[RMDB]
RNA sequence: GGGAACGACUCGAGUAGAGUCGAAAAGGGUUAGCGUUCGCGCUAACCCCAGCAUCGAACAUGUCAAAUCUCGCAGACAUGAAACGAUCAAAAGCGAGAAAACUAGACAGUCAUUCGUGACUGUCAAAGAAAACGAGAAUUUCGAUUCUCGUUUUCUAAAAGAAACAACAACAACAAC
Reactivity to DMS in 0.01 (KOAc 150mM, MgCl2 10mM, bicine 150mM(pH8.5), 24C), signal-to-noise 3, nucleotides 027 to 126: g000g000g000u000u010a000g000c000g010u010u010c280g030c030g010c000u000a010a000c000c010c000c030a040g000c130a080u000c060g020a140a300c030a020u000g000u000c010a030a080a090u000c000u000c010g020c020a150g010a000c010a000u000g000a050a060a110c110g000a050u000c250a020a030a090a070g010c010g000a010g000a030a080a100a090c230u000a100g020a000c000a010g010u000c000a050u000u020c160g020u000g000a000c000u000g010u000c000a020a050
Reactivity to 2A3 in 0.01 (KOAc 150mM, MgCl2 10mM, bicine 150mM(pH8.5), 24C), signal-to-noise 3, nucleotides 027 to 126: g000g000g000u000u010a000g000c010g020u050u050c260g000c000g000c120u000a000a000c000c000c000c000a030g050c010a080u100c020g070a060a040c010a000u010g010u010c010a020a070a280u020c020u010c010g000c010a010g010a030c000a000u000g030a120a040a010c060g040a030u180c100a010a050a060a030g010c000g010a000g000a040a030a020a010c080u050a050g000a000c000a000g000u010c000a000u040u130c180g090u030g010a000c000u000g000u010c000a000a010
Record summary:
Chemical mapping of a 177-nucleotide RNA with DMS and 2A3. For 2A3, 7,302 sequencing reads were counted. The DMS profile rests on 2,811 reads. For 2A3 the reverse transcriptase was SuperScript II with manganese. The RNA was probed in 150 mM KOAc, 10 mM MgCl2 and 150 mM bicine (pH 8.5) at 24 C. Values cover nucleotides 27 to 126. In probing experiments dimethyl sulfate is read out at A N1 and C N3, which are open when not base-paired.